[RMDB]
Annotation:
This 177-nucleotide RNA was probed chemically with DMS. The reactions ran in a buffer of 150 mM KOAc, 10 mM MgCl2 and 150 mM bicine (pH 8.5), at 24 C. It was measured as part of the RMDB library 15KREP. Reactivities are given for positions 27 through 126.
RNA sequence: GGGAACGACUCGAGUAGAGUCGAAAAGAGGAGGGCGGAAAAAGAGGAGCGGGCCUCCCGAUCCGAGGGGCCCGGUGGCCUGAUCUGGAGGGCACUCCGGGCCGUAGGGAAGAAAAGCACCCAGAGGGAACGUCAAUAAGUUCGCUUAUUGACGUUCAAAAGAAACAACAACAACAAC
Reactivity to DMS in 0.01 (KOAc 150mM, MgCl2 10mM, bicine 150mM(pH8.5), 24C), signal-to-noise 1, nucleotides 027 to 126: g020a120g000g000a090g000g020g040c080g010g010a070a070a040a110a110g000a140g030g010a080g000c010g010g010g040c060c060u010c020c000c030g020a030u000c030c080g000a150g010g010g030g020c010c000c000g050g040u000g000g010c000c000u010g000a070u000c120u010g040g010a300g000g000g000c040a100c000u000c000c010g010g000g050c010c080g020u000a070g010g000g000a280a130g000a070a030a050a100g020c150a070c080c010c000a100g010a120g020g000